[RMDB]
RNA sequence: GGGAACGACUCGAGUAGAGUCGAAAAAGUACAAAGAGUGACUCUCACGGACGAUCGAAGGAGAUCCUGCCCUUACAUUUACAAAACUCUUGCGACAGUGACUCCUAAGGUCCUGUCCAGCGCUACAUUGCAGUAAACUGGCCAACGUUGCAGGGCCAGGUAAAUCAAGGUUCGCCUUGAUUUACCUAAAAGAAACAACAACAACAAC
Reactivity to 2A3 in 0.01 (KOAc 150mM, MgCl2 10mM, bicine 150mM(pH8.5), 24C), signal-to-noise 4, nucleotides 027 to 156: a000g120u110a070c090a030a110a030g070a040g020u100g060a080c010u020c000u030c160a070c080g050g030a010c030g030a060u050c020g020a080a020g030g020a020g000a180u000c000c010u020g000c000c010c010u060u090a110c060a170u140u110u080a070c090a050a240a160a060c060u100c030u090u110g050c080g030a030c010a010g020u040g180a000c000u030c020c020u050a080a030g000g010u000c000c030u010g000u000c000c010a020g000c040g030c020u050a070c060a210u100u150g000c030a030g030u170a040a130a100c030u060g000g000c000c000a050a040c180g030u030u040g020c100a070g000g000g030c000c020
Reactivity to DMS in 0.01 (KOAc 150mM, MgCl2 10mM, bicine 150mM(pH8.5), 24C), signal-to-noise 1, nucleotides 027 to 156: a020g030u000a090c040a100a100a070g020a100g060u010g050a040c080u000c030u010c110a110c060g000g000a060c060g000a060u000c010g000a280a130g080g010a090g020a060u000c010c030u010g000c000c010c020u000u000a040c100a130u000u000u000a240c100a080a080a100a080c140u020c060u000u000g040c020g010a050c030a100g000u030g020a080c030u000c020c030u030a070a280g060g000u000c000c020u000g000u010c010c030a040g000c030g010c050u000a070c050a140u000u010g000c140a040g000u010a060a050a060c040u010g010g030c000c020a100a050c110g020u010u000g000c040a000g010g060g050c040c050
This 207-nucleotide RNA was probed chemically with 2A3 and DMS. It was measured as part of the RMDB library OK3TST. The RNA was probed in 150 mM KOAc, 10 mM MgCl2 and 150 mM bicine (pH 8.5) at 24 C.